Structure probing data (2A3 and DMS) for a 177-nucleotide construct. The RNA was probed in 150 mM KOAc, 10 mM MgCl2 and 150 mM bicine (pH 8.5) at 24 C. Values cover nucleotides 27 to 126. For 2A3 the reverse transcriptase was SuperScript II with manganese.

RNA sequence: GGGAACGACUCGAGUAGAGUCGAAAAGAAUGAUCAUGAUGGUAAAGAGAGAUACCCUCUGGGCGUUGUCCAGUUCCCAGAGGAGCAGCGCCCGUGGAGGAGCGCAAGGCGUAAAGCUGGGGUAGCUAGUCAUAUGCACUUUCGAGUGCAUAUGACUAAAAGAAACAACAACAACAAC
Reactivity to 2A3 in 0.01 (KOAc 150mM, MgCl2 10mM, bicine 150mM(pH8.5), 24C), signal-to-noise 3, nucleotides 027 to 126: g030a020a040u160g020a020u070c060a040u100g090a030u050g050g020u070a030a180a010g080a000g000a010g010a040u100a110c010c010c000u000c000u030g000g000g000c030g060u030u060g060u010c030c010a010g060u060u090c000c030c020a020g020a040g000g000a000g010c000a000g000c000g000c000c000c010g000u050g030g060a020g010g020a060g010c030g000c020a040a040g090g000c070g090u220a150a020a040g010c020u010g010g040g010g000u030a030g070c050u030
Reactivity to DMS in 0.01 (KOAc 150mM, MgCl2 10mM, bicine 150mM(pH8.5), 24C), signal-to-noise 2, nucleotides 027 to 126: g000a040a020u010g000a140u020c040a110u030g000a080u000g010g000u000a030a040a070g020a150g000a080g020a080u030a040c070c000c030u000c020u000g000g000g020c130g000u000u000g010u000c070c080a160g000u050u010c000c000c000a140g000a090g010g000a070g000c020a040g020c020g000c000c000c040g000u040g000g020a070g000g000a110g010c060g000c050a100a060g000g000c030g000u010a030a140a150g010c020u010g000g010g020g000u010a080g000c090u010